[RMDB]
RNA sequence: GGGAACGACUCGAGUAGAGUCGAAAACACACUGAGCGCGGUGACAUUGUCCAACAAGCGGUCCUGCGCUUCCGGCGGGAGGUAGCGGAGCAACCCUUCAGCGCUCCACGCGGUGGGCUGGGUCGGGGAAGUAUCGCCUAUUCGUAGGCGAUACUUCAAAAGAAACAACAACAACAAC
Reactivity to DMS in 0.01 (KOAc 150mM, MgCl2 10mM, bicine 150mM(pH8.5), 24C), signal-to-noise 2, nucleotides 027 to 126: c010a120c140a100c150u000g040a030g010c000g050c010g010g020u000g020a010c020a060u020u010g020u000c040c100a160a120c220a080a120g020c070g010g010u000c010c010u000g000c010g010c000u000u000c080c080g040g010c140g010g000g000a070g000g030u000a060g020c070g000g000a010g010c030a190a160c120c050c060u000u010c040a140g010c150g000c010u000c030c040a030c090g020c090g000g010u010g010g000g000c090u000g000g000g000u000c030g000g000g010
Reactivity to 2A3 in 0.01 (KOAc 150mM, MgCl2 10mM, bicine 150mM(pH8.5), 24C), signal-to-noise 2, nucleotides 027 to 126: c070a000c000a030c050u080g020a030g020c040g000c010g010g070u260g020a000c020a080u110u210g070u130c130c040a140a060c050a170a020g060c090g100g000u000c000c010u010g000c010g000c000u020u000c000c030g080g000c040g030g000g010a090g000g120u250a030g010c020g020g010a010g000c030a050a110c080c000c000u160u130c070a060g020c030g040c050u010c000c020a050c050g070c010g000g100u160g000g060g000c130u160g020g060g040u090c070g000g000g040
Chemical mapping of a 177-nucleotide RNA with DMS and 2A3. The data come from the RNA Mapping Database (RMDB), library OK2TRN. DMS (dimethyl sulfate) methylates the pairing face of unpaired adenines and cytosines. For DMS, 1,252 sequencing reads were counted. For 2A3, 2,642 sequencing reads were counted.